[RMDB]
RNA sequence: GGGAACGACUCGAGUAGAGUCGAAAAGUUGCCACGGUAUUUGUAAAGUGAUAUGACGCUGGUGGGAGUGUCUUUUCGCAAGCUAAUGCAUUAUAUUUAGCGUACAAAGAGCCAGCUUCUUUACUGCAUCCUGUUUUAUCAGCAGGGUCUUUGUGAAGUCCUGAGUGGUAUUCGUACCACUCAGGACAAAAGAAACAACAACAACAAC
Reactivity to 2A3 in 0.01 (KOAc 150mM, MgCl2 10mM, bicine 150mM(pH8.5), 24C), signal-to-noise 1, nucleotides 027 to 156: g030u000u030g030c030c050a120c020g020g000u000a150u060u040u010g030u030a160a160a160g020u010g010a020u020a010u240g010a040c000g000c080u010g000g070u030g070g020g000a050g020u070g050u070c000u050u110u040u050c030g000c010a150a000g070c010u010a050a020u030g030c050a130u270u100a080u140a080u140u070u050a010g010c010g000u000a050c010a000a070a000g050a010g110c000c000a010g010c010u050u000c000u060u110u060a100c070u040g070c010a020u040c000c000u000g100u060u070u000u110a120u140c090a000g010c010a020g000g030g040u000c010u100u080u060g050u040g120a010a150
Record summary
An RNA of 207 nucleotides, treated with 2A3 and read out base by base. It was measured as part of the RMDB library OK3TST. The reactions ran in a buffer of 150 mM KOAc, 10 mM MgCl2 and 150 mM bicine (pH 8.5), at 24 C.